This 177-nucleotide RNA was probed chemically with 2A3 and DMS. Values are in units of 0.01, from 0 to 300, in steps of 10. Reactivities are given for positions 27 through 126. Conditions: 150 mM KOAc, 10 mM MgCl2 and 150 mM bicine (pH 8.5), 24 C. It was measured as part of the RMDB library TTRDES. The 2A3 profile rests on 2,204 reads.

[RMDB]
RNA sequence: GGGAACGACUCGAGUAGAGUCGAAAAGAUAUGGACAUAUGCAGCUUUUGACGGAGGAGUAUCGGAAACGAUAUGACUCCGAUAAGCUGGUAUGUCCUAAGUCAAAGUGUAGUGUUCGCACUACACACUUGGUUGCUAACUUCGGUUAGCAACCAAGAAAAGAAACAACAACAACAAC
Reactivity to 2A3 in 0.01 (KOAc 150mM, MgCl2 10mM, bicine 150mM(pH8.5), 24C), signal-to-noise 1, nucleotides 027 to 126: g050a040u080a020u150g040g020a000c020a000u090a050u290g300c010a160g000c000u120u080u300u300g300a200c040g000g000a010g000g020a010g000u000a010u000c000g000g050a090a040a010c030g000a010u000a000u030g010a010c000u000c010c010g010a000u010a010a000g000c010u020g010g000u000a000u010g000u000c010c010u000a040a030g020u010c040a170a080a000g000u010g020u010a010g010u020g070u130u090c300g030c100a000c000u020a000c000a000c010a000
Reactivity to DMS in 0.01 (KOAc 150mM, MgCl2 10mM, bicine 150mM(pH8.5), 24C), signal-to-noise 1, nucleotides 027 to 126: g010a020u000a300u030g010g000a060c000a000u000a000u000g000c000a010g030c060u000u000u000u000g000a300c120g000g020a030g010g000a300g000u010a010u000c030g030g000a140a040a270c000g000a030u000a000u000g000a300c000u000c000c000g010a030u000a000a010g030c000u000g000g000u000a000u000g000u000c000c000u000a000a010g000u000c080a040a060a120g010u000g010u000a000g030u000g000u000u000c300g020c010a000c000u000a000c000a000c000a050